[RMDB]
RNA sequence: GGGAACGACUCGAGUAGAGUCGAAAAAUAGCUACCAUCUCUUCCAUCUUUCUGUCCCUCUCACACUUCGUCCUCUAUCUCCAUCUCUUUUCUUGUUAUGAGAGCUGCAGGCAAUCGAAGGCAGAUCCGUAAAUUAGCUGUUCGCAGCUAAUUUACGAAAAGAAACAACAACAACAAC
Reactivity to 2A3 in 0.01 (KOAc 150mM, MgCl2 10mM, bicine 150mM(pH8.5), 24C), signal-to-noise 9, nucleotides 027 to 126: a000u160a020g020c030u070a050c010c010a070u020c030u000c000u100u000c020c010a070u020c030u020u110u030c030u040g080u050c010c020c000u030c010u010c010a060c000a020c050u040u060c020g060u020c020c010u020c010u050a090u060c020u020c030c010a090u020c030u010c000u050u070u110u050c060u090u100g080u110u100a120u150g060a050g000a010g070c030u030g000c020a050g050g000c020a040a080u090c070g040a050a020g050g000c010a010g010a100u020c020
Reactivity to DMS in 0.01 (KOAc 150mM, MgCl2 10mM, bicine 150mM(pH8.5), 24C), signal-to-noise 5, nucleotides 027 to 126: a100u030a080g010c050u010a110c040c030a080u010c030u010c040u000u000c030c030a070u020c050u000u000u010c030u010g020u000c020c020c000u010c040u010c040a070c080a080c020u000u000c020g000u010c020c020u000c050u000a070u000c020u010c030c020a100u010c020u000c020u020u010u010u020c050u010u000g010u010u030a070u030g000a110g010a050g010c060u000g000c050a030g020g000c090a090a070u010c090g000a080a060g020g020c020a020g000a080u010c050